[RMDB]
RNA sequence: GGGAACGACUCGAGUAGAGUCGAAAAAGCGCGCACGCCCGGCGAAGAAGUUCGCAUACGCGGUGUGCUGGUGCCGAAGUGUCUGCUGCAACGGCACGCUCGACACCUCAGACAGGAACGCCGGCUCGAUACUGUCCAAGUUCGCUUGGACAGUAUCAAAAGAAACAACAACAACAAC
Reactivity to DMS in 0.01 (KOAc 150mM, MgCl2 10mM, bicine 150mM(pH8.5), 24C), signal-to-noise 4, nucleotides 027 to 126: a070g020c030g030c100g020c020a040c030g030c020c010c050g000g000c010g030a040a010g010a160a100g010u010u010c050g000c020a070u030a300c110g000c090g010g020u000g000u000g000c030u000g000g000u000g020c020c020g000a040a120g020u010g010u030c040u020g000c060u040g040c130a110a150c110g000g000c000a040c010g000c110u000c020g010a070c040a020c030c020u000c070a130g000a100c080a060g000g030a110a100c040g010c000c030g010g000c060u010c070
Reactivity to 2A3 in 0.01 (KOAc 150mM, MgCl2 10mM, bicine 150mM(pH8.5), 24C), signal-to-noise 8, nucleotides 027 to 126: a000g040c050g000c000g000c000a020c020g010c000c020c010g010g010c030g010a030a010g060a060a030g210u050u040c010g000c050a050u080a240c060g030c110g030g010u010g000u000g010c030u030g010g010u020g000c000c010g030a080a030g020u040g020u090c090u100g080c050u080g050c100a110a080c040g030g000c000a000c020g020c050u030c010g010a010c000a010c010c000u040c020a080g020a150c030a020g060g060a080a050c020g000c010c000g040g020c010u030c040

Description: Chemical mapping of a 177-nucleotide RNA with DMS and 2A3. The RNA was probed in 150 mM KOAc, 10 mM MgCl2 and 150 mM bicine (pH 8.5) at 24 C. DMS adducts were read by reverse transcription with MarathonRT. It was measured as part of the RMDB libraries RFM100 and RFMREP. For 2A3 the reverse transcriptase was SuperScript II with manganese.